Overview:
Chemical mapping of a 177-nucleotide RNA with DMS and 2A3. Conditions: 150 mM KOAc, 10 mM MgCl2 and 150 mM bicine (pH 8.5), 24 C. The DMS profile rests on 8,986 reads. As a SHAPE reagent, 2A3 marks flexible, mostly unpaired nucleotides at the ribose 2'-OH. Source: RMDB library M2PK50, as collected in RNAgym.
RNA sequence: GGGAACGACUCGAGUAGAGUCGAAAACACAUUCUAUUCGUAGAAUGUGGAACGUAGAGAGUUCGACAGCGUCGCAGCUAUGUCGAACGAGGAAGAGCGCGCAGGGAUCGGGCUUCGGCCCGAUCAAACUUCAAAUACCGUUCGCGGUAUUUGAAGUAAAAGAAACAACAACAACAAC
Reactivity to DMS in 0.01 (KOAc 150mM, MgCl2 10mM, bicine 150mM(pH8.5), 24C), signal-to-noise 6, nucleotides 027 to 126: c000a000c000a010u000u000c000u000a000u000u010c170g020u000a010g000a010a000u000g020u000g000g000a080a070c090g010u010a090g000a100g010a260g010u000u000c000g000a010c010a030g000c020g030u010c300g010c210a190g000c010u000a050u000g010u000c000g010a010a010c010g010a110g000g000a060a040g000a050g010c020g010c060g030c110a090g010g010g010a010u000c000g010g000g000c000u000u010c210g020g010c000c000c010g000a000u000c010a030a060
Reactivity to 2A3 in 0.01 (KOAc 150mM, MgCl2 10mM, bicine 150mM(pH8.5), 24C), signal-to-noise 2, nucleotides 027 to 126: c000a000c000a000u000u000c000u020a030u040u050c110g090u040a010g010a010a000u010g000u010g020g020a080a000c040g040u130a030g040a010g000a010g170u010u010c000g000a010c010a020g030c030g060u220c130g040c120a100g020c020u130a080u240g010u000c000g000a000a000c000g000a030g020g050a060a070g040a010g060c040g000c030g010c070a040g120g060g000a000u010c000g000g000g000c000u030u070c170g080g010c000c000c000g000a000u000c000a010a010